[RMDB]
RNA sequence: GGGAACGACUCGAGUAGAGUCGAAAAGGGAUCCAUGGAUCCUAGUGGAUCCCGGUUAUAAGAGACCACGCAGGACGGUCGGAUCCUGCUAUCACACCGACGGUUCUAGGAUCCACUUACGCGGAUCUAGGGUCUACUUUUUCGAAAGUAGACCCUAAAAAGAAACAACAACAACAAC
Reactivity to 2A3 in 0.01 (KOAc 150mM, MgCl2 10mM, bicine 150mM(pH8.5), 24C), signal-to-noise 1, nucleotides 027 to 126: g050g020g020a020u000c020c040a020u090g030g100a050u030c000c000u010a000g030u010g100g020a000u010c020c000c020g000g000u080u070a180u040a170a080g070a000g110a110c080c000a080c160g050c040a020g000g000a010c130g000g260u150c020g000g070a050u010c050c030u000g110c040u100a100u210c100a100c020a030c020c010g120a140c000g070g010u040u000c010u010a000g000g040a000u030c000c000a050c000u190u270a070c160g030c130g060g040a030u000c010
Reactivity to DMS in 0.01 (KOAc 150mM, MgCl2 10mM, bicine 150mM(pH8.5), 24C), signal-to-noise 2, nucleotides 027 to 126: g000g000g000a030u000c000c000a170u000g000g000a050u000c010c020u000a010g040u020g020g010a050u010c000c000c070g000g000u000u020a140u000a120a140g000a140g020a070c050c010a150c160g000c060a020g000g020a030c100g000g000u010c130g010g000a150u000c020c060u000g010c070u000a030u000c020a090c160a060c040c010g050a090c060g020g000u000u030c030u000a100g010g020a010u000c000c020a050c160u010u010a080c150g000c090g010g020a020u000c010